[RMDB]
RNA sequence: GGGAACGACUCGAGUAGAGUCGAAAAGGUAGCAUGGAUUCAACUGCUCUUGAUGUCGGGCAAUCCGUAGGUAACAGCAUUGUCCGUGGAUUCACUGAUUUCGGCUUGGAUACCGGUAGCUUAAAUGAUCCUCGGGCUGAUUCGUCAGCCCGAGGAUAAAAGAAACAACAACAACAAC
Reactivity to 2A3 in 0.01 (KOAc 150mM, MgCl2 10mM, bicine 150mM(pH8.5), 24C), signal-to-noise 1, nucleotides 027 to 126: g050g110u080a000g000c020a010u090g040g100a000u140u050c030a030a010c140u100g010c000u020c170u180u030g080a040u130g090u000c000g000g000g000c000a000a000u000c030c060g040u050a160g080g030u100a200a000c050a030g050c060a120u050u050g000u000c000c000g000u050g040g000a060u060u020c000a000c110u040g030a070u000u010u050c090g020g000c010u000u160g010g000a010u100a150c000c000g100g020u020a000g010c000u060u000a020a020a020u300g000
Structure probing data (2A3) for a 177-nucleotide construct. The data come from the RNA Mapping Database (RMDB), library OK1LIB. Values cover nucleotides 27 to 126.